Record summary: Chemical mapping of a 177-nucleotide RNA with DMS and 2A3. The DMS profile rests on 727 reads.
RNA sequence: GGGAACGACUCGAGUAGAGUCGAAAACCAUUACGGUACCUGAAGAGUUCGCAAGUCAUGUUGCCAACUUCCAAAAAUCAGGUUAUAGUAAAUAUGUCACUGUUCAGGGACCACCUGGCACUGGCAACAAGCCCUUUAUGUUCGCAUAAAGGGCUUGAAAAGAAACAACAACAACAAC
Reactivity to DMS in 0.01 (KOAc 150mM, MgCl2 10mM, bicine 150mM(pH8.5), 24C), signal-to-noise 2, nucleotides 027 to 126: c000c010a250u000u000a040c030g030g010u020a000c000c000u000g020a030a230g010a010g000u020u000c300g020c000a000a080g020u000c300a040u020g010u000u000g000c020c080a000a000c000u010u000c160c220a000a040a040a140a190u000c000a000g030g000u000u010a020u020a160g030u000a050a080a100u000a130u000g000u000c020a040c050u000g010u030u010c010a010g010g010g030a210c300c290a100c000c010u000g000g020c020a000c080u020g000g000c000a020a160
Reactivity to 2A3 in 0.01 (KOAc 150mM, MgCl2 10mM, bicine 150mM(pH8.5), 24C), signal-to-noise 2, nucleotides 027 to 126: c010c000a020u010u060a030c030g030g000u020a010c000c000u010g070a040a030g010a020g020u010u020c010g000c000a030a000g050u180c040a070u180g030u090u000g000c000c010a000a000c020u160u080c030c040a090a070a080a010a090u010c000a020g020g040u000u020a050u020a010g030u010a000a060a050u180a070u030g020u010c000a000c020u020g040u230u250c000a030g010g110g150a300c100c040a100c010c030u010g000g000c000a010c000u000g000g010c000a000a080